[RMDB]
RNA sequence: GGGAACGACUCGAGUAGAGUCGAAAACGUUCGAACAACAAGAACGAACUCUACGUAAUGCCGGGAUACCCGUGGCAGCGAUAGCUGUUUGCCUGUUCGAAAACUUUUUGGGAGGUGUGAGAUGCGGUCACCAAAGGAUAUUCGUAUCCUUUGGUGAAAAAGAAACAACAACAACAAC
Reactivity to DMS in 0.01 (KOAc 150mM, MgCl2 10mM, bicine 150mM(pH8.5), 24C), signal-to-noise 9, nucleotides 027 to 126: c110g010u000u000c010g010a060a090c160a110a130c270a130a120g000a050a090c020g010a050a080c020u000c010u000a020c010g010u010a090a080u010g010c010c010g000g000g000a180u020a100c100c030c020g010u010g010g030c010a030g000c020g000a140u020a050g010c080u010g010u000u010u000g010c090c040u010g000u000u000c040g000a050a040a050a070c090u000u010u000u010u020g010g000g010a060g000g010u000g000u000g000a060g010a070u000g010c050g000g000
Reactivity to 2A3 in 0.01 (KOAc 150mM, MgCl2 10mM, bicine 150mM(pH8.5), 24C), signal-to-noise 9, nucleotides 027 to 126: c020g020u000u000c010g030a070a030c030a030a020c040a090a110g050a070a020c020g000a030a030c010u000c010u020a020c020g050u080a130a080u080g020c010c010g010g000g070a140u200a280c010c010c040g090u130g030g000c010a010g000c010g090a110u060a030g030c070u020g040u040u030u070g020c010c020u030g010u020u020c020g030a020a040a080a100c050u090u110u030u100u100g060g020g010a040g010g000u050g010u040g050a070g010a040u090g040c030g020g020